[RMDB]
RNA sequence: GGGAACGACUCGAGUAGAGUCGAAAAUAUGGCUAUAUUCAUCACAGGCUACUCUAUACCUUCUGCUCCAACCAGCCGCCGGGAGUGCAUCGUUGGGUCCACGGAUGUCUGUUAGAUGCGCCCCUGAGCAGGGCGGCAUGGGGCGCGUGUGAUGUGGACGCUAUGAUUUUUUCGAAAAUCAUAGCGUAAAAGAAACAACAACAACAAC
Reactivity to 2A3 in 0.01 (KOAc 150mM, MgCl2 10mM, bicine 150mM(pH8.5), 24C), signal-to-noise 5, nucleotides 027 to 156: u250a090u070g050g030c070u080a060u030a080u280u100c020a000u010c000a030c010a020g080g000c030u090a090c020u080c050u140a150u130a260c050c040u130u120c080u150g010c000u020c010c010a070a130c010c030a020g000c000c000g000c000c010g010g010g000a110g010u020g000c000a010u010c010g100u150u180g040g000g030u010c040c030a060c120g070g010a050u090g130u110c030u050g110u130u150a040g000a010u020g000c000g000c000c000c000c010u010g030a040g040c060a050g030g020g010c000g000g020c000a030u030g010g000g020g000c010g000c030g040u010g000u000g010a010u000g030u050g080g040
Reactivity to DMS in 0.01 (KOAc 150mM, MgCl2 10mM, bicine 150mM(pH8.5), 24C), signal-to-noise 2, nucleotides 027 to 156: u000a100u000g030g000c030u000a080u010a090u020u000c030a030u010c020a050c040a040g000g020c020u000a030c090u000c030u020a060u010a070c030c000u000u000c050u010g020c010u000c030c060a070a130c050c040a140g030c030c040g000c040c050g010g030g010a050g030u000g020c010a050u000c030g020u010u010g010g010g010u000c020c040a300c190g040g000a110u000g010u010c040u000g030u000u000a140g000a060u010g020c010g040c010c000c010c010u040g000a080g020c070a070g000g010g000c020g020g020c010a030u000g000g030g010g030c160g000c040g020u000g000u000g010a040u000g020u000g010g010

The record gives the reactivity of an RNA of 207 nucleotides to 2A3 and DMS. 2A3 adducts were read by reverse transcription with SuperScript II with manganese. High DMS reactivity at an A or C suggests that its Watson-Crick edge is free. The 2A3 profile rests on 3,528 reads. Reactivities are given for positions 27 through 156. Conditions: 150 mM KOAc, 10 mM MgCl2 and 150 mM bicine (pH 8.5), 24 C. The data come from the RNA Mapping Database (RMDB), library OK3TST. Reactivities are rounded to 0.1 and cut off at 0 and 3.